[RMDB]
RNA sequence: GGGAACGACUCGAGUAGAGUCGAAAAGAUAUGGAGCUUCUGGAGCGACAUACCGAGGUCGGAAACGAUACAGUAUGUAUCGCGAUGAAAGAAGCUCCUAAGUCAAACACUUACUUCGGUAAGUGAAGAUAGAGAUGGUCUUCGGACCAUCUCUAUCAAAAGAAACAACAACAACAAC
Reactivity to 2A3 in 0.01 (KOAc 150mM, MgCl2 10mM, bicine 150mM(pH8.5), 24C), signal-to-noise 1, nucleotides 027 to 126: g020a010u090a010u090g010g000a000g010c020u010u000c020u010g010g000a010g000c000g000a000c000a000u030a010c020c020g090a090g010g010u010c000g030g040a090a070a040c030g000a000u020a010c010a010g000u000a010u010g050u080a170u050c000g000c020g300a300u000g040a040a010a020g010a000a000g000c000u010c000c000u000a000a000g000u000c040a000a120a070c000a010c000u010u020a000c000u020u070c300g050g000u000a000a000g000u010g120a080a050
Reactivity to DMS in 0.01 (KOAc 150mM, MgCl2 10mM, bicine 150mM(pH8.5), 24C), signal-to-noise 1, nucleotides 027 to 126: g010a070u000a300u020g020g000a020g020c000u010u000c010u000g010g000a010g040c020g020a030c000a010u000a010c000c000g030a230g010g000u010c000g010g000a150a090a250c010g000a010u000a000c020a030g020u010a020u000g000u010a060u030c000g000c000g020a200u000g010a110a100a010g000a010a010g010c000u000c000c000u020a020a060g040u010c070a200a140a190c010a010c000u000u000a000c000u000u020c210g060g030u000a000a020g000u010g020a110a060